[RMDB]
RNA sequence: GGGAACGACUCGAGUAGAGUCGAAAAGCUGCGUGAAACCUCGCUGUUUUCUUGGCUAACUUUCAGCGAGGUGACGCAAGGCGGCAAAAAAAAGUUGGGAGCAGCAACGGCAAGCAAAAAAAAAGUUACAAGUUGCGAUGGUUCGCCAUCGCAACAACGUCGGAUUUAUGUUCGCAUAAAUCCGACGAAAAGAAACAACAACAACAAC
Reactivity to 2A3 in 0.01 (KOAc 150mM, MgCl2 10mM, bicine 150mM(pH8.5), 24C), signal-to-noise 1, nucleotides 027 to 156: g000c010u020g000c020g020u040g060a160a020a010c000c010u020c010g010c010u000g020u000u030u000u010c070u120u200g090g000c090u010a010a000c000u000u000u000c000a010g000c000g020a000g000g010u000g000a000c000g000c010a030a000g100g030c030g000g000c030a050a090a080a000a000a000a000a000g110u130u090g020g000g000a040g030c020a010g020c000a010a040c030g070g010c030a040a040g060c000a030a040a010a000a000a000a000a000a000g010u020u000a030c030a100a080g010u000u000g000c000g000a000u000g000g060u050u060c080g090c060c010a010u000c000g040c000a000a000c000a000a000
Notes
An RNA of 207 nucleotides, treated with 2A3 and read out base by base.